[RMDB]
RNA sequence: GGGAACGACUCGAGUAGAGUCGAAAAAAGAUCCGGCGUCGGAAGCCUAGACACAAAAGUCUUGAGCACCUUGUAUACGCCAGAAGAGUUUGACCUUGGGGCUCCAUUUAAUACCACCACUACAAUGCACAGUGAGCAAAUUCGUUUGCUCACUGUGAAAAGAAACAACAACAACAAC
Reactivity to DMS in 0.01 (KOAc 150mM, MgCl2 10mM, bicine 150mM(pH8.5), 24C), signal-to-noise 1, nucleotides 027 to 126: a020a030g010a100u000c020c080g000g020c050g020u020c090g020g000a070a070g010c020c020u000a030g050a050c010a140c120a130a090a150a220g000u000c000u010u000g000a140g050c010a110c080c050u010u000g080u020a280u030a070c030g020c000c040a020g020a020a140g020a140g020u000u000u020g010a160c050c010u000u000g020g000g020g030c000u000c060c020a020u000u010u010a060a030u000a040c050c060a060c040c050a030c060u000a100c170a130a100u010g000
This 177-nucleotide RNA was probed chemically with DMS. The data come from the RNA Mapping Database (RMDB), library OK2TST.